Source information: Structure probing data (2A3) for a 207-nucleotide construct. The reactions ran in a buffer of 150 mM KOAc, 10 mM MgCl2 and 150 mM bicine (pH 8.5), at 24 C. For 2A3 the reverse transcriptase was SuperScript II with manganese.
[RMDB]
RNA sequence: GGGAACGACUCGAGUAGAGUCGAAAAAUCACAUAAUGUAGCACCAUUGAGAGCACCAACUAUUGCCAAUCAAGAGCGAUACUCAUCUAUAUUUAAGUUGCAUCCUGCAUUUAAUAUAGCUGAAGCUUAUGCGCAAUUGGUGCCAUAUUAUCAACUCUCUUACUGGCGGUUUCGACCGCCAGUAAGAAAAAGAAACAACAACAACAAC
Reactivity to 2A3 in 0.01 (KOAc 150mM, MgCl2 10mM, bicine 150mM(pH8.5), 24C), signal-to-noise 1, nucleotides 027 to 156: a000u090c040a040c010a030u130a050a020u030g010u010a000g020c000a000c020c000a030u020u070g060a100g040a000g000c000a000c060c010a070a180c130u060a020u040u040g010c010c010a020a090u220c020a270a000g010a060g140c000g030a010u010a020c010u000c020a020u030c000u030a010u000a020u000u220u000a070a090g120u130u070g030c030a040u170c040c090u100g010c010a010u010u010u010a000a000u000a000u000a010g000c040u000g000a090a010g000c010u110u110a030u080g080c130g000c030a010a000u120u070g000g000u000g000c000c000a000u010a000u000u000a010u010c000a000a060c030u030c000